[RMDB]
RNA sequence: GGGAACGACUCGAGUAGAGUCGAAAAGCGUACUACCUCAGAGGAUGACGGGAGCUCAACUGAGAAAUACAAUCCCAAAUAGGAUUGGUGUUGAGCGAGGAUCGUCAUCUCCCCACCUGAGGUAUCGCAAAUGGGGACUGAUUCGUCAGUCCCCAAAACCAAUAGUACGCUUCGGCGUACUAUUGGUAAAAGAAACAACAACAACAAC
Reactivity to DMS in 0.01 (KOAc 150mM, MgCl2 10mM, bicine 150mM(pH8.5), 24C), signal-to-noise 1, nucleotides 027 to 156: g020c000g000u000a050c130u000a010c000c000u000c040a010g000a300g010g020a040u000g010a020c010g020g000g010a100g020c010u000c000a010a100c020u000g000a200g000a100a190a180u000a080c040a000a000u000c000c000c050a020a070a220u000a010g020g030a070u000u020g000g000u000g000u000u000g010a030g000c010g010a130g020g000a020u000c020g070u010c010a010u000c020u000c110c080c060c020a300c140c050u000g050a020g000g010u020a010u000c020g020c020a060a060a140u000g010g000g040g010a010c000u030g010a070u000u000c300g020u020c020a000g000u000c000c000c000c000a000a000a010
Reactivity to 2A3 in 0.01 (KOAc 150mM, MgCl2 10mM, bicine 150mM(pH8.5), 24C), signal-to-noise 2, nucleotides 027 to 156: g000c010g000u060a100c030u020a010c000c000u010c000a000g020a020g020g030a000u000g000a000c000g010g010g000a040g020c000u000c000a000a000c020u070g030a000g080a030a230a080u300a070c010a030a000u000c010c020c100a110a210a080u300a050g000g000a000u000u000g000g000u040g000u000u000g010a000g000c000g010a040g010g010a040u060c000g000u000c000a000u000c020u030c030c000c020c020a080c000c000u000g000a000g000g000u000a020u100c000g000c000a000a010a120u110g000g000g020g000a000c000u010g010a030u000u070c160g050u020c140a000g000u050c000c020c000c000a000a000a000